Description
Structure probing data (2A3 and DMS) for a 177-nucleotide construct. The data come from the RNA Mapping Database (RMDB), library M2PK90. Reactivities are given for positions 27 through 126. For DMS, 5,712 sequencing reads were counted.
[RMDB]
RNA sequence: GGGAACGACUCGAGUAGAGUCGAAAAGGAAAUCAAAAUUAGAGAUGUGAAGGCUGAGAUUAGAAAGGUAAUGAAGGUAGGAUAUUGUCACUGGUUUACGGUAACCACCACCACCAAAAUAAAAAAACGAUAGAUUAGGAUUCGUCCUAAUCUAUCGAAAAGAAACAACAACAACAAC
Reactivity to 2A3 in 0.01 (KOAc 150mM, MgCl2 10mM, bicine 150mM(pH8.5), 24C), signal-to-noise 5, nucleotides 027 to 126: g040g020a020a040a080u130c070a080a040a050a090u180u140a090g020a010g000a070u060g050u040g070a050a010g010g000c020u040g020a030g010a140u000u090a040g080a110a060a000g030g000u060a080a060u120g040a040a020g040g010u050a030g020g020a030u040a060u100u140g060u030c020a020c060u050g010g030u050u060u050a030c030g010g020u010a040a010c010c010a000c000c010a010c010c000a010c010c030a020a090a120a020u230a050a130a020a010a000a010a010
Reactivity to DMS in 0.01 (KOAc 150mM, MgCl2 10mM, bicine 150mM(pH8.5), 24C), signal-to-noise 5, nucleotides 027 to 126: g010g010a100a090a070u010c070a030a040a070a110u000u010a100g000a110g020a060u000g020u000g020a050a080g010g020c030u000g000a080g010a100u010u000a080g010a060a050a060g000g010u010a050a050u010g000a060a050g010g010u000a050g000g010a060u010a040u000u010g010u000c060a060c070u000g000g020u000u010u000a050c080g010g010u000a040a050c050c070a070c050c030a090c080c040a040c050c050a030a050a060a080u030a020a020a080a070a050a050a130